[RMDB]
RNA sequence: GGGAACGACUCGAGUAGAGUCGAAAAAUCGUCCCAAUGACCAAGAGAAGGGAAGAAACGGAAGCCUUUCCCCUUGACGCCGGUGAAACUCUGGAAUAGGAAGAAGGAAGGUGGAAAGAAAGGAGGGAACCAUGCUUGUUCGCAAGCAUGAAAAGAAACAACAACAACAAC
Reactivity to DMS in 0.01 (KOAc 150mM, MgCl2 10mM, bicine 150mM(pH8.5), 24C), signal-to-noise 9, nucleotides 027 to 129: a110u030c160g000u000c000c020c030a120a080u060g010a060c090c080a100a070g020a020g000a030a020g000g010g020a000a000g000a020a080a080c110g010g010a100a050g000c080c040u010u020u010c010c000c000c080u000u000g030a100c110g000c020c030g000g020u010g020a070a060a070c060u030c040u040g000g000a070a080u000a090g020g020a030a020g030a040a030g000g010a010a020g030g030u040g020g000a030a040a010g000a050a060a080g000g000a030g000g000g000a030a030c110
Reactivity to 2A3 in 0.01 (KOAc 150mM, MgCl2 10mM, bicine 150mM(pH8.5), 24C), signal-to-noise 9, nucleotides 027 to 129: a010u060c030g030u030c000c010c000a000a060u130g020a030c020c030a070a020g040a010g010a040a030g010g020g020a010a020g010a020a100a010c060g040g030a040a010g020c010c000u020u050u010c000c000c000c020u010u070g020a030c050g020c030c010g000g000u060g040a080a030a010c030u020c020u060g010g030a020a030u040a100g050g010a020a030g010a010a010g050g010a010a010g030g050u100g010g050a050a050a020g080a060a040a010g040g010a020g000g010g000a010a010c020

About this RNA
An RNA of 170 nucleotides, treated with DMS and 2A3 and read out base by base. It was measured as part of the RMDB library 15KLIB. For DMS the reverse transcriptase was MarathonRT.